The record gives the reactivity of an RNA of 177 nucleotides to 2A3. It was measured as part of the RMDB library OK1LIB. For 2A3 the reverse transcriptase was SuperScript II with manganese.
[RMDB]
RNA sequence: GGGAACGACUCGAGUAGAGUCGAAAACAUGCGCGCUCAUCUAGAGACACUGAGAGCUGUCCUCGCGCACAGCUGCUGCACCGGUUAGGCUGCACAAAUUUGGUCGACCGAGUGUAGGUCUCGAACCCCGCAGUCCUACCUUCGGGUAGGACUGCGGAAAAGAAACAACAACAACAAC
Reactivity to 2A3 in 0.01 (KOAc 150mM, MgCl2 10mM, bicine 150mM(pH8.5), 24C), signal-to-noise 1, nucleotides 027 to 126: c100a030u070g000c000g000c000g110c040u050c050a080u000c040u110a050g000a000g000a050c000a020c060u270g070a000g010a000g070c010u040g090u020c000c000u000c020g000c000g100c000a000c000a000g020c020u040g080c000u000g010c000a000c000c010g000g000u050u000a140g000g000c000u190g070c230a000c050a140a100a000u170u200u270g030g000u000c000g000a000c160c000g110a230g000u000g000u000a000g120g000u000c000u000c000g030a100a100c000c000